[RMDB]
An RNA of 177 nucleotides, treated with 2A3 and DMS and read out base by base. The DMS profile rests on 1,666 reads. The 2A3 profile rests on 984 reads. Values cover nucleotides 27 to 126. The RNA was probed in 150 mM KOAc, 10 mM MgCl2 and 150 mM bicine (pH 8.5) at 24 C.

RNA sequence: GGGAACGACUCGAGUAGAGUCGAAAAGAGUUAACGUGCCCUACGUGUGUCUCCUAGCUAAUAAAGAGCAAGAAGCUAUUUUGAUGUCUGAAGACGUUAAGUUAAACCCUUCAGAAGAUUUUAUAAACUCAGAACUAAUGUUCGCAUUAGUUCUGAGAAAAGAAACAACAACAACAAC
Reactivity to 2A3 in 0.01 (KOAc 150mM, MgCl2 10mM, bicine 150mM(pH8.5), 24C), signal-to-noise 1, nucleotides 027 to 126: g080a030g000u040u090a080a030c040g030u010g080c000c020c000u010a020c030g030u050g000u010g000u060c010u000c060c000u010a000g000c010u000a050a040u020a140a250a050g030a030g000c000a010a030g120a100a020g060c000u030a090u040u210u100u120g090a080u110g040u000c020u020g000a010a000g000a000c080g000u000u050a040a030g030u020u020a060a030a020c000c010c030u000u000c000a010g040a030a060g000a050u110u190u080u070a240u060a070a030a040
Reactivity to DMS in 0.01 (KOAc 150mM, MgCl2 10mM, bicine 150mM(pH8.5), 24C), signal-to-noise 2, nucleotides 027 to 126: g000a100g010u000u020a070a070c020g030u000g000c050c020c020u000a040c070g030u000g010u000g000u010c020u000c020c030u000a130g010c060u000a080a080u020a050a110a150g000a030g020c030a140a070g000a100a100g020c090u010a090u000u000u000u000g000a120u010g010u000c000u000g000a040a030g000a030c120g000u000u000a080a130g000u020u010a080a030a060c040c060c000u000u000c020a040g000a040a070g000a100u000u000u000u020a090u010a100a100a170